Record summary:
The record gives the reactivity of an RNA of 177 nucleotides to DMS. The DMS profile rests on 1,305 reads. Reactivities are rounded to 0.1 and cut off at 0 and 3. For DMS the reverse transcriptase was MarathonRT.
RNA sequence: GGGAACGACUCGAGUAGAGUCGAAAAGAUAUGGAAAAGUCUUCGAUAAGCUCUACUCGGAAACGAGUAGGAGCUUUUGACGAAGUCGUUCCUAAGUCAAAGACCUCCCGCUUCGGCGGGAGGUCAAGUUAAGUCUAAUCUUCGGAUUAGACUUAACAAAAGAAACAACAACAACAAC
Reactivity to DMS in 0.01 (KOAc 150mM, MgCl2 10mM, bicine 150mM(pH8.5), 24C), signal-to-noise 1, nucleotides 027 to 126: g020a070u000a090u000g010g010a070a110a110a260g010u000c020u000u000c000g010a100u000a020a020g000c000u010c000u000a020c000u000c000g000g000a010a070a090c000g000a020g000u000a030g020g000a010g010c000u000u000u000u000g010a100c030g020a030a020g040u010c010g000u000u010c010c000u010a060a170g000u010c140a090a120a220g000a000c010c010u010c010c000c000g030c010u000u010c200g020g030c010g020g050g010a010g000g000u000c000a000a020